[RMDB]
RNA sequence: GGGAACGACUCGAGUAGAGUCGAAAACGAACCAGCCCGUCACGCACCCCGUGCAGCAUGUUCACGAUGUUGCGAAACGCCUGAUUCAUCUGGGCCAUGGUGUCUAGCGAGGUCGCCUCGGCCAUGCGAUCACAGGGUAGUUCGCUACCCUGUGAUCAAAAGAAACAACAACAACAAC
Reactivity to 2A3 in 0.01 (KOAc 150mM, MgCl2 10mM, bicine 150mM(pH8.5), 24C), signal-to-noise 2, nucleotides 027 to 126: c040g020a020a030c010c000a000g040c010c010c010g050u060c020a030c020g040c010a070c010c010c020c010g020u060g020c010a000g010c000a040u060g040u080u150c050a030c080g070a040u050g000u070u010g000c000g000a070a070a010c040g010c000c010u080g010a060u130u000c020a060u030c120u100g010g010g050c000c030a060u100g050g000u040g000u000c040u050a030g070c030g070a030g070g000u090c040g010c020c000u020c010g000g000c000c010a020u070g030c070
Reactivity to DMS in 0.01 (KOAc 150mM, MgCl2 10mM, bicine 150mM(pH8.5), 24C), signal-to-noise 3, nucleotides 027 to 126: c110g010a070a100c040c020a070g000c040c020c030g000u040c060a060c100g010c030a110c050c070c040c040g020u010g020c040a040g000c020a030u010g010u000u000c180a160c140g020a010u000g000u000u010g000c020g010a040a100a060c100g000c060c030u010g000a100u010u000c050a100u010c060u000g010g010g020c050c040a110u000g000g020u010g000u010c060u010a170g000c030g000a050g020g020u000c060g000c030c020u000c060g010g020c020c020a070u000g010c150